[RMDB]
RNA sequence: GGGAACGACUCGAGUAGAGUCGAAAACGGCAAAAUAGAUCCGUAACUUCGGGAAAAGGAUUGGCUCUGAGGGUUGGGCCUAGGGGUCUUUUUGGAGAACUUGUGGCGGCCUACGUUGGGCUGCGUCGGUAAAUUUAAAGUUCGCUUUAAAUUUACCAAAAGAAACAACAACAACAAC
Reactivity to 2A3 in 0.01 (KOAc 150mM, MgCl2 10mM, bicine 150mM(pH8.5), 24C), signal-to-noise 9, nucleotides 027 to 126: c010g040g000c030a030a020a020a100u170a080g050a050u030c010c000g040u040a040a070c030u080u090c070g070g010g050a020a060a020a040g050g030a090u080u080g020g000c010u020c040u080g080a140g030g130g030u130u110g060g030g000c000c010u020a050g000g020g000g000u020c000u030u050u030u050u060g080g020a080g010a060a040c040u110u110g050u090g170g000c010g000g010c010c000u040a070c090g120u120u140g010g000g000c010u000g010c020g030u030c070
Reactivity to DMS in 0.01 (KOAc 150mM, MgCl2 10mM, bicine 150mM(pH8.5), 24C), signal-to-noise 6, nucleotides 027 to 126: c050g020g010c120a050a050a090a100u020a060g010a050u020c010c010g010u010a130a140c050u010u020c080g010g010g010a060a050a080a100g010g010a080u010u010g000g010c020u000c040u010g020a150g010g000g020u010u010g010g000g010c040c030u000a080g000g000g020g000u010c010u000u000u000u030u010g010g000a120g000a070a100c140u010u010g010u020g010g030c000g010g000c010c010u000a060c210g010u020u030g000g000g010c020u000g020c020g020u020c080